[RMDB]
RNA sequence: GGGAACGACUCGAGUAGAGUCGAAAAGCCUCUGCUGCCACAGUGGCCUCAUUUUUGAAAGUAGGCAGGGCUCCAAACAACUUCGUUUACCUUGCCGAGGACAAACCUGUCUGUCCUGCAGACACUAACUACGGGUACGAUUCGUCGUACCCGUAGUAAAAGAAACAACAACAACAAC
Reactivity to DMS in 0.01 (KOAc 150mM, MgCl2 10mM, bicine 150mM(pH8.5), 24C), signal-to-noise 2, nucleotides 027 to 126: g030c010c000u000c030u000g010c040u000g030c080c080a120c030a030g020u000g000g000c020c040u000c100a020u000u000u000u000u000g000a130a100a050g020u000a100g030g030c000a000g000g000g050c220u010c140c100a030a020a040c010a080a170c300u010u010c140g020u000u000u010a120c000c000u000u000g000c000c010g000a150g000g020a030c020a040a040a110c110c050u000g000u010c030u000g020u000c070c110u020g020c050a080g010a060c090a120c200u000a140
Reactivity to 2A3 in 0.01 (KOAc 150mM, MgCl2 10mM, bicine 150mM(pH8.5), 24C), signal-to-noise 1, nucleotides 027 to 126: g010c000c000u050c010u040g030c060u060g020c040c010a040c020a030g040u040g070g030c000c020u060c040a150u110u170u060u020u130g300a300a140a050g030u040a030g000g000c000a000g040g020g000c060u100c130c040a070a020a040c040a020a020c100u280u210c120g000u050u050u010a060c010c020u000u030g000c000c010g020a040g010g020a000c000a040a100a060c000c070u050g000u040c000u010g050u020c020c060u070g020c010a000g020a050c010a000c100u070a080
Source: RMDB library OK2TRN, as collected in RNAgym. Chemical mapping of a 177-nucleotide RNA with DMS and 2A3. The reactions ran in a buffer of 150 mM KOAc, 10 mM MgCl2 and 150 mM bicine (pH 8.5), at 24 C. 2A3 adducts were read by reverse transcription with SuperScript II with manganese. The DMS profile rests on 1,177 reads.